The record gives the reactivity of an RNA of 177 nucleotides to 2A3 and DMS. 2A3 adducts were read by reverse transcription with SuperScript II with manganese. For DMS the reverse transcriptase was MarathonRT. For 2A3, 36,418 sequencing reads were counted. High DMS reactivity at an A or C suggests that its Watson-Crick edge is free. Reactivities are given for positions 27 through 126.
RNA sequence: GGGAACGACUCGAGUAGAGUCGAAAAGCUCAAUAGAGCAAGCUUUCAAUCACCAUAAGGAAGAGCCACGAACGGAUAGAGACGACUACGGUAGGCAUUUCCAUUGGGAAGCUGAAAUGGAGAGCUGGUAUGUACUUAGUUUCGACUAAGUACAUACAAAAGAAACAACAACAACAAC
Reactivity to 2A3 in 0.01 (KOAc 150mM, MgCl2 10mM, bicine 150mM(pH8.5), 24C), signal-to-noise 9, nucleotides 027 to 126: g000c000u000c000a050a130u100a120g050a040g120c060a040a000g000c010u060u070u080c080a140a230u140c060a070c110c010a040u070a140a110g020g000a010a020g020a020g060c000c010a030c030g100a180a010c020g040g040a050u130a160g150a050g050a090c050g060a080c070u170a050c060g110g050u110a120g060g000c020a030u020u020u000c010c010a030u020u050g030g000g010a010a010g010c030u050g030a060a070a050u070g030g010a030g000a000g030c010u030g020
Reactivity to DMS in 0.01 (KOAc 150mM, MgCl2 10mM, bicine 150mM(pH8.5), 24C), signal-to-noise 9, nucleotides 027 to 126: g020c000u010c000a050a300u070a060g000a110g020c210a090a020g000c010u000u010u020c110a100a100u040c180a300c110c030a030u020a100a170g000g000a020a020g010a070g010c010c000a060c070g000a140a100c040g000g010a110u030a110g010a150g010a090c060g010a080c080u020a080c030g010g010u030a100g010g000c000a080u010u000u000c000c000a080u000u010g020g000g000a040a020g000c040u000g000a060a090a060u010g010g000a300g000a020g010c010u000g000